[RMDB]
RNA sequence: GGGAACGACUCGAGUAGAGUCGAAAAGACACGACGGAGACGUCGUGUCAAAGAGUGGGAAACCACUCAAAGAGCCACAGCUUCGGCUGUGGCUCAAGGCGCGGCGCUGUCCGCGGAACAAACCCAAUGAUUACGUAUCAUUCGUGAUACGUAAUCAAAAAGAAACAACAACAACAAC
Reactivity to DMS in 0.01 (KOAc 150mM, MgCl2 10mM, bicine 150mM(pH8.5), 24C), signal-to-noise 4, nucleotides 027 to 126: g000a030c010a000c010g000a020c000g000g000a240g000a180c010g010u000c010g020u000g000u000c000a030a050a090g010a000g020u010g010g000g000a170a120a260c010c000a010c000u000c000a010a080a120g010a030g050c000c000a000c010a010g020c000u000u010c250g030g010c010u000g030u000g000g000c000u000c000a010a030g020g020c030g030c010g010g000c010g020c290u010g000u010c010c000g020c010g010g000a080a100c180a050a090a140c000c010c010a110a140
Reactivity to 2A3 in 0.01 (KOAc 150mM, MgCl2 10mM, bicine 150mM(pH8.5), 24C), signal-to-noise 3, nucleotides 027 to 126: g010a000c010a000c010g030a010c000g010g020a050g040a060c010g010u000c000g000u000g000u010c000a000a000a000g000a000g000u010g000g000g010a030a040a080c000c000a010c010u000c000a020a030a000g010a000g010c000c010a010c000a000g020c010u130u170c300g120g000c020u030g010u010g000g000c000u000c000a010a010g000g020c020g000c010g010g000c080g040c300u180g120u090c000c000g030c000g020g000a020a020c070a050a060a020c030c000c000a020a110
Source information: An RNA of 177 nucleotides, treated with DMS and 2A3 and read out base by base. The 2A3 profile rests on 5,716 reads. It was measured as part of the RMDB library OK2TRN. For DMS, 4,254 sequencing reads were counted.